The record gives the reactivity of an RNA of 207 nucleotides to 2A3.
2A3 adducts were read by reverse transcription with SuperScript II with manganese.
The reactions ran in a buffer of 150 mM KOAc, 10 mM MgCl2 and 150 mM bicine (pH 8.5), at 24 C.
Reactivities are given for positions 27 through 156.
RNA sequence: GGGAACGACUCGAGUAGAGUCGAAAACGGCAAAAAAGCAAACUUGACCACCAAGGAUAAGAGAGAUCUUAUCCAAGGAUGCAAAAGAUAAUCUCACUUUUGACACCCACUGAUCUCGAACUUAAAGAAAACCGAGACUACUUCGGUAGUCUCGGAAGCGAAUCUCUAUGUUCGCAUAGAGAUUCGCAAAAGAAACAACAACAACAAC
Reactivity to 2A3 in 0.01 (KOAc 150mM, MgCl2 10mM, bicine 150mM(pH8.5), 24C), signal-to-noise 2, nucleotides 027 to 156: c040g040g020c070a000a000a010a050a060a080g060c090a110a060a080c050u080u070g090a120c030c010a010c010c010a040a060g000g010a000u000a000a000g010a000g010a000g030a040u000c000u000u000a010u000c010c000a000a000g000g000a010u040g010c010a000a050a010a020g030a070u150a130a110u090c050u010c070a050c000u070u000u030u020g020a060c050a100c020c030c010a070c110u070g090a090u020c060u050c070g070a120a090c040u080u140a150a090a050g060a030a110a070a030c010c000g000a000g000a000c000u000a000c000u000u030c090g070g010u000a000g020u000c010u000c000g000g000a000a000